[RMDB]
RNA sequence: GGGAACGACUCGAGUAGAGUCGAAAAUCAUCUAUGUUCGCAUAGAUGAACACAGCCUUGUAGUUUUAGUGGACUUUAGGCUAAAGAAUUUGACUAGAAAAAUAAUCGGGUGUUUCGACACCCGAAAAUCUUACGUACGGUUCGCCGUACGUAAGAUAAAAGAAACAACAACAACAAC
Reactivity to 2A3 in 0.01 (KOAc 150mM, MgCl2 10mM, bicine 150mM(pH8.5), 24C), signal-to-noise 2, nucleotides 027 to 126: u010c010a000u000c000u000a000u010g020u030u050c170g000c140a000u000a010g010a010u000g010a030a020c130a000c020a010g020c020c000u080u070g150u150a070g090u060u050u060u030a180g050u250g150g000a010c000u100u130u050a010g000g000c000u070a140a040a060g080a100a140u120u160u300g090a070c040u070a130g240a140a120a050a010a010u130a050a110u000c000g020g010g000u000g030u030u060u100c120g030a000c000a000c020c020c030g020a000a000a020
Reactivity to DMS in 0.01 (KOAc 150mM, MgCl2 10mM, bicine 150mM(pH8.5), 24C), signal-to-noise 1, nucleotides 027 to 126: u000c000a000u000c000u000a000u000g000u020u000c220g040c000a010u000a010g020a030u000g000a020a060c130a130c180a060g000c030c000u000u000g010u000a000g000u000u000u000u000a090g050u000g020g000a010c010u000u000u000a030g000g000c000u000a050a080a090g010a130a090u010u000u010g000a080c070u000a180g010a010a110a100a100a070u010a060a110u000c000g000g000g010u000g020u000u000u000c190g000a040c010a000c010c000c010g000a010a000a070